[RMDB]
RNA sequence: GGGAACGACUCGAGUAGAGUCGAAAAGUAUCCCUAGAUGAUAAAACACCGCACAUGGCUCGUAAGAGCGGUUAAAUUAACAAGUAAUGCAAAUUACGCGAGGUAACGCAUGGCCUAGGCUCGUUAGAAAAGGGAGAAUCCUUCGGGAUUCUCCCAACCUAACAAGUCACUUCGGUGACUUGUUAGGAAAAGAAACAACAACAACAAC
Reactivity to DMS in 0.01 (KOAc 150mM, MgCl2 10mM, bicine 150mM(pH8.5), 24C), signal-to-noise 1, nucleotides 027 to 156: g030u000a120u000c020c000c000u000a100g000a070u020g000a200u000a060a080a130a100c080a020c010c000g020c090a170c100a140u010g000g000c000u000c070g030u040a120a170g020a040g000c000g020g050u000u020a060a150a190u000u020a090a150c040a090a090g010u000a030a060u010g040c150a170a070a130u000u000a040c040g000c030g000a050g070g000u020a000a080c060g020c060a120u020g000g030c020c060u000a080g060g000c020u000c020g010u010u000a120g000a000a060a110a100g010g040g010a060g000a020a030u000c000c000u000u010c300g080g010g010a020u000u000c020u030c020c000c010a020a010
Reactivity to 2A3 in 0.01 (KOAc 150mM, MgCl2 10mM, bicine 150mM(pH8.5), 24C), signal-to-noise 1, nucleotides 027 to 156: g040u030a080u080c000c000c000u000a100g060a210u090g060a030u160a100a080a070a000c030a020c010c000g070c010a040c010a020u090g090g000c000u000c030g060u020a150a000g040a020g080c040g000g000u050u090a000a110a040u050u140a080a030c040a120a020g090u110a110a000u090g050c040a050a120a120u040u110a060c070g000c010g040a020g010g020u030a020a020c030g020c060a080u040g040g010c000c010u000a020g010g070c050u020c090g090u010u000a060g060a070a170a080a020g040g000g000a000g010a000a000u020c020c000u000u030c090g070g000g000a000u000u000c000u000c000c000c000a000a000